[RMDB]
RNA sequence: GGGAACGACUCGAGUAGAGUCGAAAAGAUAUGGAUCCCAGUGGACAUGAUAAACCCUCGGAAACGAGGGCACUAUCAACAGCCACGGGAUCCUAAGUCAAAACCACAUCUCUUCGGAGAUGUGGAACGUGAAAGAAAGGUUCGCCUUUCUUUCACGAAAAGAAACAACAACAACAAC
Reactivity to 2A3 in 0.01 (KOAc 150mM, MgCl2 10mM, bicine 150mM(pH8.5), 24C), signal-to-noise 4, nucleotides 027 to 126: g010a010u010a010u070g000g000a000u000c020c010c090a010g020u010g000g030a080c250a300u300g010a010u040a040a180a090c000c000c000u000c010g020g000a010a030a010c000g000a000g000g020g030c020a010c010u020a000u020c030a180a230c130a160g010c000c000a000c000g000g030g000a010u000c000c010u010a020a000g010u000c010a000a000a090a230c000c000a010c000a000u000c010u000c000u020u110c300g200g010a010g010a010u000g000u010g000g010a010a030
Reactivity to DMS in 0.01 (KOAc 150mM, MgCl2 10mM, bicine 150mM(pH8.5), 24C), signal-to-noise 4, nucleotides 027 to 126: g000a000u000a080u010g010g010a020u000c000c000c000a160g030u000g000g000a040c080a280u010g010a020u000a010a160a300c010c000c000u010c000g020g000a020a010a040c000g020a010g000g020g000c060a010c300u000a010u000c000a080a070c250a150g010c000c010a020c020g020g010g010a000u000c000c000u000a000a040g000u010c000a080a070a110a170c010c000a020c000a000u000c000u000c000u000u020c280g000g000a030g000a010u000g010u000g000g020a020a030